[RMDB]
RNA sequence: GGGAACGACUCGAGUAGAGUCGAAAACAAGACAGUUGAAGCUACUAACAGGGUGGCGACAGUAAGUAUGAGUUUCAUUUUUUAGUCUCCUAUAAGAAAAAUAUAUUGACAAUAUAACUCUUCUAGCUAUUACACCCAUUUUCGAAUGGGUGUAAUAAAAAGAAACAACAACAACAAC
Reactivity to 2A3 in 0.01 (KOAc 150mM, MgCl2 10mM, bicine 150mM(pH8.5), 24C), signal-to-noise 5, nucleotides 027 to 126: c020a020a060g140a020c030a050g030u040u040g040a060a010g030c000u020a020c010u020a160a190c120a180g200g050g000u020g020g010c010g040a020c000a030g080u150a170a020g010u030a110u140g040a030g040u020u060u050c100a090u050u050u040u030u070u150a050g010u010c030u040c050c020u060a060u060a200a080g060a030a110a000a050a010u100a010u030a050u070u110g030a020c020a060a040u060a020u020a140a020c020u020c000u100u000c010u030a030g000c000
Reactivity to DMS in 0.01 (KOAc 150mM, MgCl2 10mM, bicine 150mM(pH8.5), 24C), signal-to-noise 4, nucleotides 027 to 126: c030a170a130g010a080c120a080g000u000u000g010a050a270g010c050u020a070c060u010a130a120c210a120g020g010g020u000g010g010c020g010a180c070a050g000u020a040a070g010u000a060u010g000a120g000u010u000u010c060a020u000u000u000u010u000u010a110g000u000c040u000c040c020u000a060u010a040a080g000a050a100a090a080a090u020a010u000a050u000u010g000a120c050a070a110u000a010u010a010a080c090u000c040u010u000c030u010a080g000c140